[RMDB]
RNA sequence: GGGAACGACUCGAGUAGAGUCGAAAACUCGCGCGAACAUCGAGGCGUGGAGCGCGACAUGAAUCAGCCUCCAUUAGAUUAAUGGUCGACAGAUCAGCGGCGAUCAGCGACCCAAUUAGAAGCCGCAACCGGAAGAGGAGACGCUCGACGGACGUCAAAUUUACGAUCAGUUCGCUGAUCGUAAAUUAAAAGAAACAACAACAACAAC
Reactivity to DMS in 0.01 (KOAc 150mM, MgCl2 10mM, bicine 150mM(pH8.5), 24C), signal-to-noise 2, nucleotides 027 to 156: c020u010c010g000c030g030c020g010a070a120c070a150u000c000g000a070g050g090c020g010u010g010g010a290g030c010g020c030g020a120c060a090u010g020a110a090u010c040a190g020c010c000u010c000c000a080u040u000a070g010a150u000u010a060a070u000g010g030u020c000g020a110c080a120g010a070u000c030a090g010c010g010g000c000g000a100u000c030a100g020c010g000a110c050c000c070a060a080u000u000a110g000a090a080g020c000c000g040c020a100a070c050c010g030g010a100a090g000a160g010g010a190g010a060c020g010c010u000c060g020a160c060g020g000a070c010g010u000c010a020
Reactivity to 2A3 in 0.01 (KOAc 150mM, MgCl2 10mM, bicine 150mM(pH8.5), 24C), signal-to-noise 3, nucleotides 027 to 156: c020u010c010g000c000g000c000g100a280a010c010a070u050c030g010a010g020g000c000g010u010g030g020a040g000c040g000c000g020a030c060a140u300g090a100a130u120c040a060g000c020c010u000c030c010a130u170u200a030g050a120u050u230a140a080u150g010g000u000c010g020a090c060a110g000a010u030c040a070g000c000g030g000c000g010a010u010c030a010g030c010g000a020c000c000c030a030a040u150u100a070g060a210a010g000c010c000g020c030a010a040c020c010g040g040a120a010g000a090g060g030a100g030a050c070g040c060u040c040g030a040c030g040g000a020c010g020u040c010a000